[RMDB]
RNA sequence: GGGAACGACUCGAGUAGAGUCGAAAAUGAACUUGAUUCGGCGGUAAUGCGCCACGCAAAUCGGCCGUGAUAUCACGAGCGACACGGCCCGUCGCGACUCCAUAUCGAAUCACUUGACCGAUGAUUCAAUUCCAGUUCGGUUCGCCGAACUGGAAUUAAAAGAAACAACAACAACAAC
Reactivity to DMS in 0.01 (KOAc 150mM, MgCl2 10mM, bicine 150mM(pH8.5), 24C), signal-to-noise 1, nucleotides 027 to 126: u000g000a050a060c140u000u000g000a120u000u000c050g000g000c060g020g040u000a080a110u010g000c030g000c020c030a090c090g010c130a030a110a050u000c110g000g010c010c000g030u000g040a130u000a090u010c000a110c180g000a050g000c050g030a130c020a020c040g000g020c010c010c070g000u000c090g030c040g010a140c070u000c000c010a020u000a030u000c020g020a040a030u000c000a010c050u000u000g020a070c010c010g000a070u000g000a040u000u000c020
Reactivity to 2A3 in 0.01 (KOAc 150mM, MgCl2 10mM, bicine 150mM(pH8.5), 24C), signal-to-noise 1, nucleotides 027 to 126: u050g000a020a040c050u000u060g020a010u170u040c070g040g000c030g030g070u100a110a110u190g080c040g000c000c010a020c010g040c040a020a060a050u040c040g020g000c040c000g030u000g080a050u040a020u220c180a100c180g120a090g110c010g050a010c000a010c000g050g000c000c000c000g040u010c030g050c000g080a060c010u030c050c010a000u000a000u120c040g000a030a000u020c000a000c060u030u110g070a040c040c030g030a050u050g030a040u050u000c050